[RMDB]
RNA sequence: GGGAACGACUCGAGUAGAGUCGAAAAUUUCAAAAUGAGUUUGAAGCAUUCAAGAUGUCAGUAGGGAAGUCAAUGCCGAUGCGGCAGAAAUAGCAAGAGAACUAGAAUUGGAAAUGGAGCUCAAGGAUGUAACUGAACUGCUGUAACCUCAUGAUAACGACGGUACCAAAUUCGUUUGGUACCGUCGAAAAGAAACAACAACAACAAC
Reactivity to 2A3 in 0.01 (KOAc 150mM, MgCl2 10mM, bicine 150mM(pH8.5), 24C), signal-to-noise 1, nucleotides 027 to 156: u010u090u040c050a040a000a000a100u040g040a070g140u070u120u070g090a030a000g010c040a020u160u160c080a100a000g010a030u040g030u000c010a000g010u030a050g000g010g030a020a000g110u080c060a020a020u100g020c000c040g080a140u150g090c030g020g020c030a000g030a000a110a070u090a030g020c020a030a000g000a000g030a160a000c010u060a080g080a070a060u190u090g060g000a000a080a040u090g000g030a020g060c020u030c050a000a000g040g000a060u130g080u080a030a000c040u070g000a000a030c030u000g010c020u010g050u100a070a070c000c000u050c000a000u060g150a090u080a120a030